The record gives the reactivity of an RNA of 177 nucleotides to 2A3. The reactions ran in a buffer of 150 mM KOAc, 10 mM MgCl2 and 150 mM bicine (pH 8.5), at 24 C. The data come from the RNA Mapping Database (RMDB), library OK1LIB.
RNA sequence: GGGAACGACUCGAGUAGAGUCGAAAACGCAAAACAGUGAGUGGACGGAAGAAAUCCCCUUCCCACCUCCCCACUGUCCACUCACUGUCUUCCUAAGAGGAAAUAUAAAUCGGGGGUGGGAAGGGGACGGACCGAGUAUCUUCGGAUACUCGGUCCGAAAAGAAACAACAACAACAAC
Reactivity to 2A3 in 0.01 (KOAc 150mM, MgCl2 10mM, bicine 150mM(pH8.5), 24C), signal-to-noise 1, nucleotides 027 to 126: c180g010c050a160a090a000a000c000a000g000u000g000a000g040u000g000g000a040c020g200g050a020a040g000a060a150a070u040c000c000c000c000u000u000c000c010c000a000c030c000u050c000c060c040c010a030c000u000g000u000c000c000a000c000u000c000a000c000u000g000u010c060u000u000c000c000u070a130a080g030a120g190g150a000a050a000u300a000u140a080a080a070u200c120g020g000g000g000g000u000g000g040g000a000a000g000g000g060g000a000